[RMDB]
RNA sequence: GGGAACGACUCGAGUAGAGUCGAAAAGAUAUGGAGCUGGAACGACAUGAAGGAGUAUCGGAAACGAUAUGACUUCAACAGCGUUCAGCUCCUAAGUCAAAUCAGUGAGCCUUCGGGCUCACUGAAACCUGAAAAAUAAGUUCGCUUAUUUUUCAGGAAAAGAAACAACAACAACAAC
Reactivity to DMS in 0.01 (KOAc 150mM, MgCl2 10mM, bicine 150mM(pH8.5), 24C), signal-to-noise 5, nucleotides 027 to 126: g000a030u000a190u010g000g000a010g020c010u000g050g010a010a010c010g000a050c120a300u010g010a010a010g000g020a300g000u000a000u000c000g020g000a060a040a110c010g000a000u000a010u000g010a260c000u000u010c000a060a070c190a160g000c000g000u000u000c000a020g020c000u000c000c010u000a000a040g010u000c030a120a110a190u000c000a000g020u000g000a000g010c000c000u010u010c270g020g010g010c000u000c000a010c000u010g000a000a050a110
Reactivity to 2A3 in 0.01 (KOAc 150mM, MgCl2 10mM, bicine 150mM(pH8.5), 24C), signal-to-noise 4, nucleotides 027 to 126: g010a000u020a000u070g000g010a000g010c030u120g130g190a070a040c010g060a030c130a300u300g010a020a000g000g000a020g010u010a000u000c010g000g000a020a000a000c010g000a000u010a020u050g030a030c010u010u000c020a090a040c050a040g010c010g000u000u000c010a010g000c000u000c000c000u010a000a000g000u000c010a000a000a300u050c000a010g000u010g010a010g000c020c010u050u110c230g140g010g000c020u000c000a000c000u000g000a000a000a000
This 177-nucleotide RNA was probed chemically with DMS and 2A3. For DMS the reverse transcriptase was MarathonRT. For 2A3, 13,173 sequencing reads were counted. The data come from the RNA Mapping Database (RMDB), library TTRDES. Conditions: 150 mM KOAc, 10 mM MgCl2 and 150 mM bicine (pH 8.5), 24 C.